The record gives the reactivity of an RNA of 207 nucleotides to DMS and 2A3.

RNA sequence: GGGAACGACUCGAGUAGAGUCGAAAAGAGCUCAAAAAGUGCUUGUAUGAAGAAACUUACGCUGAGGGGAGAGAAAGCCAAAAUAUCAUCACGAGGGCAAGCACUCAUGAGGUGGGCAACUUGUGGGUUCAUAUCUGUAUCAAAAGCGUCCUGAUGAAUCACAGCUCAUAUUCGUAUGAGCUGUGAUAAAAGAAACAACAACAACAAC
Reactivity to DMS in 0.01 (KOAc 150mM, MgCl2 10mM, bicine 150mM(pH8.5), 24C), signal-to-noise 1, nucleotides 027 to 156: g000a160g000c000u000c010a040a040a150a160a070g010u010g010c010u010u000g030u000a080u010g000a100a070g010a130a030a060c070u010u000a080c160g030c050u020g010a060g040g010g030g000a060g030a080g030a070a030a100g000c010c030a080a030a090a080u010a030u000c030a090u010c030a070c100g010a010g010g020g040c030a100a070g020c010a050c030u000c060a090u000g000a040g010g030u000g010g000g030c060a030a080c030u000u000g070u000g000g020g090u000u000c040a030u010a110u000c050u000g010u010a080u010c080a030a000a050a090g060c050g020u000c030c010u000g010a060u000g000a210
Reactivity to 2A3 in 0.01 (KOAc 150mM, MgCl2 10mM, bicine 150mM(pH8.5), 24C), signal-to-noise 2, nucleotides 027 to 156: g000a000g020c000u020c110a040a110a110a010a000g030u020g000c010u050u040g030u080a090u110g040a040a110g020a080a100a030c040u080u060a050c090g000c080u050g040a040g000g010g020g000a040g000a000g010a080a020a000g010c010c020a040a090a020a030u120a080u090c060a000u030c030a010c170g020a100g030g000g000c010a000a000g000c000a020c020u030c000a030u070g020a030g040g040u060g030g020g020c020a070a030c030u070u030g040u060g020g020g030u040u020c000a000u010a030u050c070u050g100u090a070u090c070a050a070a040a020g050c040g010u050c000c030u060g050a060u150g070a040
The DMS profile rests on 1,992 reads. Values cover nucleotides 27 to 156. Source: RMDB library OK3TST, as collected in RNAgym.